[RMDB]
RNA sequence: GGGAACGACUCGAGUAGAGUCGAAAAGAUAUGGAAUGUGACAGUCGCUACGAGGUCGGAAACGACUACCCACCGUAGAACUACGACGAACACAUUCCUAAGUCAAACUUCUGGUUCGCCAGAAGAACUGAAUAACAACCUUCGGGUUGUUAUUCAGAAAAGAAACAACAACAACAAC
Reactivity to DMS in 0.01 (KOAc 150mM, MgCl2 10mM, bicine 150mM(pH8.5), 24C), signal-to-noise 2, nucleotides 027 to 126: g000a000u000a300u000g000g000a020a000u000g000u010g010a050c200a300g000u000c000g020c000u000a030c000g010a080g010g010u040c020g000g000a110a080a170c000g000a000c010u000a050c030c070c080a300c130c000g010u000a010g000a060a020c090u000a300c070g020a050c030g030a260a300c000a010c010a000u000u000c000c000u010a050a100g040u000c040a150a060a120c000u020u000c000u000g000g000u000u000c250g020c030c000a010g000a000a000g000a100a120
Reactivity to 2A3 in 0.01 (KOAc 150mM, MgCl2 10mM, bicine 150mM(pH8.5), 24C), signal-to-noise 2, nucleotides 027 to 126: g040a000u070a020u170g010g000a040a020u010g020u000g040a070c210a220g000u000c010g000c040u000a000c030g020a020g000g000u020c000g000g000a070a070a040c000g020a020c030u070a070c030c050c060a070c020c040g030u020a000g010a160a070c140u260a040c230g000a000c000g000a150a020c000a000c000a010u010u030c000c000u000a050a000g030u000c000a040a080a080c020u000u000c000u000g110g040u060u130c300g030c040c000a000g000a000a000g010a040a030

The record gives the reactivity of an RNA of 177 nucleotides to DMS and 2A3. The DMS profile rests on 1,143 reads. Conditions: 150 mM KOAc, 10 mM MgCl2 and 150 mM bicine (pH 8.5), 24 C.